[RMDB]
Source information: Conditions: 150 mM KOAc, 10 mM MgCl2 and 150 mM bicine (pH 8.5), 24 C. An RNA of 177 nucleotides, treated with 2A3 and DMS and read out base by base. For 2A3 the reverse transcriptase was SuperScript II with manganese.

RNA sequence: GGGAACGACUCGAGUAGAGUCGAAAAUUGCUACUAGUUUAUAAAAUGAUUAGGAACUAUGAUCCAAACACUAUAGAUUUACUCGUUAUGUUUAUAGCAAUCUAUCCAAUCACAUUAUUAAUGUUUAAGUACGCAAAAAUUUCGAUUUUUGCGUACUAAAAGAAACAACAACAACAAC
Reactivity to 2A3 in 0.01 (KOAc 150mM, MgCl2 10mM, bicine 150mM(pH8.5), 24C), signal-to-noise 5, nucleotides 027 to 126: u030u030g030c010u010a080c030u000a070g080u060u060u060a210u110a060a170a090a060u110g040a040u040u130a080g020g020a030a030c040u060a080u210g040a070u060c090c040a060a120a000c040a000c050u140a040u050a090g100a160u040u050u160a100c070u030c050g040u090u070a030u100g060u000u060u010a080u030a020g000c000a010a050u000c000u070a050u000c000c010a050a060u100c020a040c030a150u030u150a060u140u150a300a030u030g010u000u060u010a050
Reactivity to DMS in 0.01 (KOAc 150mM, MgCl2 10mM, bicine 150mM(pH8.5), 24C), signal-to-noise 1, nucleotides 027 to 126: u050u000g000c070u000a020c090u000a070g020u000u050u000a070u000a030a030a190a120u000g020a100u000u010a200g000g000a060a050c120u010a080u030g030a030u020c150c090a130a050a050c120a070c060u020a010u000a040g010a100u000u020u000a020c120u040c120g000u020u020a020u000g030u000u000u000a070u000a040g000c020a080a030u030c040u030a070u060c010c020a060a000u000c070a010c140a140u020u000a040u040u000a000a020u010g010u040u010u040a030
For 2A3, 2,651 sequencing reads were counted.